RNA sequence: GGGAACGACUCGAGUAGAGUCGAAAAUUCGGCAUCAAUAUGGUGACCUCCCGGGAGCGGGGGACCACCAGGUUGCCUAAGGAGGGGUGAACCGGCCCAGGUCGGAAACGGAGCAGGUCAAAACUCCCGUGCUGAUCAGUAGUGGGAUCGCGCCUGUCACUAAGUAUGUGUUCGCACAUACUUAGUGAAAAGAAACAACAACAACAAC
Reactivity to 2A3 in 0.01 (KOAc 150mM, MgCl2 10mM, bicine 150mM(pH8.5), 24C), signal-to-noise 3, nucleotides 027 to 156: u110u060c040g010g000c000a010u000c020a100a210u130a090u260g000g000u000g030a110c010c000u040c020c010c000g020g080g040a140g090c090g020g000g000g000g050a050c140c030a000c000c000a010g000g020u010u010g020c010c000u000a040a020g040g030a040g010g020g010g000u050g030a050a050c030c010g010g000c000c010c020a040g000g060u010c010g010g000a130a220a010c050g000g000a030g000c070a010g010g050u130c060a020a040a060a120c040u000c000c020c000g020u030g000c010u030g020a070u100c030a030g140u170a050g050u110g030g020g010a050u050c030g010c030g030c040c010u030g030u030

Conditions: 150 mM KOAc, 10 mM MgCl2 and 150 mM bicine (pH 8.5), 24 C. An RNA of 207 nucleotides, treated with 2A3 and read out base by base. 2A3 adducts were read by reverse transcription with SuperScript II with manganese. The 2A3 profile rests on 1,863 reads.